[RMDB]
RNA sequence: GGGAACGACUCGAGUAGAGUCGAAAAUGUCAGAUCUCUGCACCAAGCCAGUUGUUCUGCUUCUGUUUUUGCAGCUGGUUUCUGUAGAUGCUCUUCAGCUGCUGAUAGCAUCUGGCCUUUAGGCAGGCGUGCCUUUCUUAUUCGUAAGAAAGGCACGAAAAGAAACAACAACAACAAC
Reactivity to 2A3 in 0.01 (KOAc 150mM, MgCl2 10mM, bicine 150mM(pH8.5), 24C), signal-to-noise 3, nucleotides 027 to 126: u100g010u010c010a000g010a090u000c020u000c000u060g000c010a030c040c030a050a000g000c000c000a010g010u010u020g030u090u040c040u030g110c020u190u100c070u210g240u090u100u030u120u110g010c010a000g010c000u000g010g000u010u060u020c020u020g030u030a020g000a080u050g020c030u020c030u230u140c070a040g000c000u030g000c010u040g060a110u100a050g010c000a010u010c000u000g020g010c020c000u040u080u080a050g020g020c000a010g010g040
Reactivity to DMS in 0.01 (KOAc 150mM, MgCl2 10mM, bicine 150mM(pH8.5), 24C), signal-to-noise 5, nucleotides 027 to 126: u000g000u010c050a060g000a040u000c050u000c010u000g010c020a060c160c180a070a080g000c010c010a010g010u000u000g000u000u000c080u000g010c070u010u010c170u010g010u010u000u000u000u000g010c010a010g010c010u000g010g010u000u000u000c080u010g010u000a040g010a040u000g010c070u000c080u000u000c110a070g010c030u000g010c020u000g010a090u000a050g000c030a020u000c010u000g000g000c010c030u010u000u000a230g020g010c010a010g000g000

Structure probing data (2A3 and DMS) for a 177-nucleotide construct. The DMS profile rests on 8,538 reads. For 2A3 the reverse transcriptase was SuperScript II with manganese. Reactivities are given for positions 27 through 126.